[RMDB]
RNA sequence: GGGAACGACUCGAGUAGAGUCGAAAAAUCUCGCCGAUCAGGUUGUAGACGCGCGCGGACUGCGUCGAAAUGCCGUUGAGCACGAGAAACGGCUCGCCUUCGCGCGUAUGCAGCGGCAGGCCGUCCAACUAAUGCUAGCAUUCGUGCUAGCAUUAGUAAAAGAAACAACAACAACAAC
Reactivity to 2A3 in 0.01 (KOAc 150mM, MgCl2 10mM, bicine 150mM(pH8.5), 24C), signal-to-noise 6, nucleotides 027 to 126: a010u010c020u010c040g000c030c010g040a140u120c090a070g170g000u070u020g020u040a020g020a060c030g000c000g000c010g010c050g030g040a090c100u120g010c020g040u090c030g020a010a010a030u160g010c010c000g020u030u070g050a050g060c080a040c160g110a120g080a100a040a000c010g010g010c020u030c020g010c000c000u040u040c030g000c000g000c000g030u030a050u140g010c010a020g020c020g020g000c010a020g020g000c010c010g020u010c010c010a020
Reactivity to DMS in 0.01 (KOAc 150mM, MgCl2 10mM, bicine 150mM(pH8.5), 24C), signal-to-noise 9, nucleotides 027 to 126: a090u010c030u000c070g030c240c020g010a150u000c110a140g020g030u000u000g020u000a060g000a040c040g010c010g010c030g010c180g010g010a080c120u010g020c090g020u000c060g000a050a130a080u010g010c000c000g000u000u000g000a190g010c130a060c070g000a080g000a100a070a050c010g000g000c000u000c070g010c010c090u000u000c080g010c010g020c040g010u000a020u000g010c030a050g010c080g010g000c090a070g010g010c040c060g010u000c030c040a110

This 177-nucleotide RNA was probed chemically with 2A3 and DMS.